[RMDB]
RNA sequence: GGGAACGACUCGAGUAGAGUCGAAAACACUACACGGAGCAACAGUCUUUCCAUGCUAUCCUGAACAUGGACCCUAUGCCUUGUCUUAGGCAGAUAGCGCGAGGGCGAUACGAAACGUGUCUCGUACGGUACGCGCGAGGUUCGCCUCGCGCGUACCAAAAGAAACAACAACAACAAC
Reactivity to 2A3 in 0.01 (KOAc 150mM, MgCl2 10mM, bicine 150mM(pH8.5), 24C), signal-to-noise 1, nucleotides 027 to 126: c050a070c070u170a100c100a010c050g080g000a010g020c000a000a050c020a000g030u070c060u020u060u000c030c000a090u020g000c000u010a020u160c000c050u030g040a010a000c000a000u000g030g020a030c000c000c000u000a050u030g020c000c020u090u140g060u300c040u120u230a000g000g030c000a000g000a020u110a000g050c070g000c030g000a030g000g040g020c000g000a010u000a100c100g070a000a220a000c000g050u020g210u030c000u070c000g080u110a180c100

Chemical mapping of a 177-nucleotide RNA with 2A3. Values cover nucleotides 27 to 126. For 2A3, 469 sequencing reads were counted. The data come from the RNA Mapping Database (RMDB), library OK1LIB.